[RMDB]
RNA sequence: GGGAACGACUCGAGUAGAGUCGAAAAGCAGUUCUGUAGAGUAAGGACAACAAAGAGAUGGCAAGUUGUCCUCCUCACAGGACUGAGUGGAGUUGAUACGCUAGUAUCUUCUUGCCAUCUCUUGGAUACUUGUGUUUGUCAACUCUUCGAACUGAGACACUACCUUCAUCUUCGGAUGAAGGUAGUGAAAAGAAACAACAACAACAAC
Reactivity to 2A3 in 0.01 (KOAc 150mM, MgCl2 10mM, bicine 150mM(pH8.5), 24C), signal-to-noise 5, nucleotides 027 to 156: g050c000a000g000u010u000c040u270g030u030a050g010a010g010u080a150a130g160g000a000c000a010a000c030a020a120a000g010a000g000a010u010g010g010c010a030a030g010u080u050g070u120c000c010u000c000c010u040c010a040c050a080g090g100a080c090u010g010a020g020u060g020g010a030g010u060u080g050a000u010a020c030g010c210u070a060g000u000a010u000c000u060u020c010u010u050g000c000c000a000u000c010u000c020u020u050g260g010a050u090a150c080u130u120g050u030g070u130u110u100g000u010c000a000a080c030u000c000u000u010c010g010a020a020c030u040g010a000g020a020
Reactivity to DMS in 0.01 (KOAc 150mM, MgCl2 10mM, bicine 150mM(pH8.5), 24C), signal-to-noise 2, nucleotides 027 to 156: g020c020a040g020u000u000c000u000g020u010a060g020a090g050u000a080a090g020g000a200c030a090a110c060a040a070a050g000a060g030a060u020g010g020c020a060a160g010u000u010g020u000c070c020u000c050c030u000c070a150c040a090g020g000a120c060u000g010a060g020u010g050g000a060g030u000u010g050a040u000a010c060g030c130u020a110g030u000a030u000c030u000u000c030u000u020g010c000c000a020u000c000u000c030u000u000g000g000a090u000a020c060u010u010g020u010g030u000u010u010g010u000c010a130a050c020u000c000u000u000c070g000a050a100c030u010g010a150g000a300
About this RNA
The record gives the reactivity of an RNA of 207 nucleotides to 2A3 and DMS. The data come from the RNA Mapping Database (RMDB), library OK3TST. The reactions ran in a buffer of 150 mM KOAc, 10 mM MgCl2 and 150 mM bicine (pH 8.5), at 24 C.